This 207-nucleotide RNA was probed chemically with 2A3 and DMS. The RNA was probed in 150 mM KOAc, 10 mM MgCl2 and 150 mM bicine (pH 8.5) at 24 C. For 2A3, 1,874 sequencing reads were counted. DMS adducts were read by reverse transcription with MarathonRT.

RNA sequence: GGGAACGACUCGAGUAGAGUCGAAAAACAACAUGCCCAGGUAGCCCAGACAUUCAAGGCUACGGUGCGUUGCGACGCACGGUCUGAUUCUUCACAACGACGUUCACCGCGUCUUCUUCCAUCCCCCUCCAGCGCACGAAGUUCGCUUCGUGCGCAACAUAUGCGAUAUCUUCGGAUAUCGCAUAUGAAAAGAAACAACAACAACAAC
Reactivity to 2A3 in 0.01 (KOAc 150mM, MgCl2 10mM, bicine 150mM(pH8.5), 24C), signal-to-noise 2, nucleotides 027 to 156: a010c120a010a040c020a090u140g010c000c000c010a030g030g080u000a030g000c000c020c120a070g040a100c040a120u130u110c070a150a000g000g010c000u000a010c010g020g020u000g000c000g000u030u080g080c120g030a000c010g030c030a020c070g040g020u020c060u060g070a110u180u030c050u110u110c050a020c030a280a090c120g060a020c010g070u140u180c050a060c060c030g020c000g030u000c020u040u030c020u060u010c070c010a120u130c020c000c000c010c030u020c010c020a010g000c000g000c000a000c000g000a000a010g010u050u070c080g020c090u000u000c000g000u000g000c000g010c000a000a000
Reactivity to DMS in 0.01 (KOAc 150mM, MgCl2 10mM, bicine 150mM(pH8.5), 24C), signal-to-noise 2, nucleotides 027 to 156: a050c020a040a060c070a120u000g000c030c010c110a150g000g040u000a040g020c030c040c040a170g000a190c100a120u010u000c110a120a090g000g020c000u000a010c020g040g020u000g010c040g000u010u010g030c110g020a090c000g010c010a070c040g000g010u010c050u000g000a180u000u000c050u020u010c070a080c090a060a120c040g000a010c060g010u010u000c080a080c080c050g000c040g000u000c020u000u020c040u000u000c000c030a120u030c020c000c000c020c000u000c030c040a090g000c010g160c000a020c020g000a000a030g060u000u000c300g000c000u000u000c000g050u000g010c010g020c010a020a030